[RMDB]
RNA sequence: GGGAACGACUCGAGUAGAGUCGAAAAGAUAUGGACUGGGAACGUAAACAAGGAUAUGGAGCGUAGGAUCGGAAACGAUCCGAAACGCUAUGAAGUAUACCUUGUUUACGUUCCCAGUCCUAAGUCAUCAAGACAAACAGUUCGCUGUUUGUCUUGAAAAAGAAACAACAACAACAAC
Reactivity to DMS in 0.01 (KOAc 150mM, MgCl2 10mM, bicine 150mM(pH8.5), 24C), signal-to-noise 3, nucleotides 027 to 126: g000a040u000a300u020g000g010a000c010u010g000g010g000a030a000c000g030u000a000a000a000c000a010a010g000g000a060u000a000u000g000g000a020g000c000g030u000a280g010g010a020u000c010g000g000a120a120a280c030g010a010u000c000c000g010a070a060a090c000g040c010u000a180u010g000a080a180g010u000a010u010a100c000c010u000u010g000u000u010u000a000c000g020u000u000c000c000c010a010g020u000c000c000u000a000a050g000u000c040a210

Record summary: An RNA of 177 nucleotides, treated with DMS and read out base by base. Reactivities are given for positions 27 through 126. The data come from the RNA Mapping Database (RMDB), library TTRINS. For DMS the reverse transcriptase was MarathonRT.